[RMDB]
Chemical mapping of a 177-nucleotide RNA with DMS. The DMS profile rests on 1,935 reads. Reactivities are given for positions 27 through 126.
RNA sequence: GGGAACGACUCGAGUAGAGUCGAAAAUGGAGGAGGAUUUUAGCACUCAUGGUUUUCCUUCGGUGCGUACAACCACAACAAGCACUCGUCCCGAUCAACCCGAUGGUGAGGUGUUGCACACGUCCAAACUGACGAUGAGGUUCGCCUCAUCGUCAGUAAAAGAAACAACAACAACAAC
Reactivity to DMS in 0.01 (KOAc 150mM, MgCl2 10mM, bicine 150mM(pH8.5), 24C), signal-to-noise 3, nucleotides 027 to 126: u010g010g040a040g000g070a030g000g010a050u000u000u000u000a100g020c070a040c090u010c040a090u010g000g000u010u000u010u000c010c010u000u000c080g010g020u000g030c040g020u000a070c210a060a090c120c040a090c110a040a050c120a140a180g000c040a070c020u000c090g000u000c010c010c010g000a110u020c110a050a090c060c020c020g000a090u010g020g000u000g000a040g000g030u010g000u000u000g020c060a100c050a090c120g000u000c010c030a070a120
The reactions ran in a buffer of 150 mM KOAc, 10 mM MgCl2 and 150 mM bicine (pH 8.5), at 24 C. DMS adducts were read by reverse transcription with MarathonRT.